[RMDB]
RNA sequence: GGGAACGACUCGAGUAGAGUCGAAAAAGGCUUUUCAUAUCAUUUUGUUUUCAGGUAAACAAAUCUGGCAAAUCUCCACUGCUUGAGUCAUUAAAACUACUCACUCAAGAAGGCAUAUACACGACAGGACUCGCAGGAUAUUCGUAUCCUGCGAGUCAAAAGAAACAACAACAACAAC
Reactivity to 2A3 in 0.01 (KOAc 150mM, MgCl2 10mM, bicine 150mM(pH8.5), 24C), signal-to-noise 2, nucleotides 027 to 126: a000g030g000c040u000u060u030u050c050a080u130a110u170c040a070u050u010u020u080g000u000u080u000u130c090a040g100g010u080a030a030a030c000a000a060a110u040c020u050g010g030c010a040a040a120u070c040u000c010c000a050c020u010g040c000u070u050g000a010g030u030c040a070u000u220a020a000a030a180c080u060a030c030u010c060a010c010u060c000a010a010g110a020a010g090g000c020a070u100a000u000a060c070a030c060g030a040c060a030g220